Conditions: 150 mM KOAc, 10 mM MgCl2 and 150 mM bicine (pH 8.5), 24 C. This 177-nucleotide RNA was probed chemically with 2A3. Source: RMDB library RFM100, as collected in RNAgym.
RNA sequence: GGGAACGACUCGAGUAGAGUCGAAAACCUGCCUCUGAGCUCGGGAGGGGUUUCCCGCCUCGCAGCCCCCGCCCCUGGACUUGCUUCUCCUCCUCCCUCUGCGUGUGGAGGGAGCCAACGCUUAGGCACCAGGGCACUACUUCGGUAGUGCCCUGGUAAAAGAAACAACAACAACAAC
Reactivity to 2A3 in 0.01 (KOAc 150mM, MgCl2 10mM, bicine 150mM(pH8.5), 24C), signal-to-noise 1, nucleotides 027 to 126: c000c000u010g010c010c000u030c000u030g100a010g010c000u020c060g020g050g000a120g000g040g010g020u000u040u050c010c010c000g030c020c020u060c020g000c040a090g020c010c010c010c000c030g030c010c010c000c020u090g040g000a050c000u060u070g040c010u050u030c000u010c010c000u000c000c010u020c000c000c000u020c000u030g080c110g120u100g050u190g020g010a000g010g000g010a020g000c000c000a110a020c130g020c020u060u040a080g000g020c030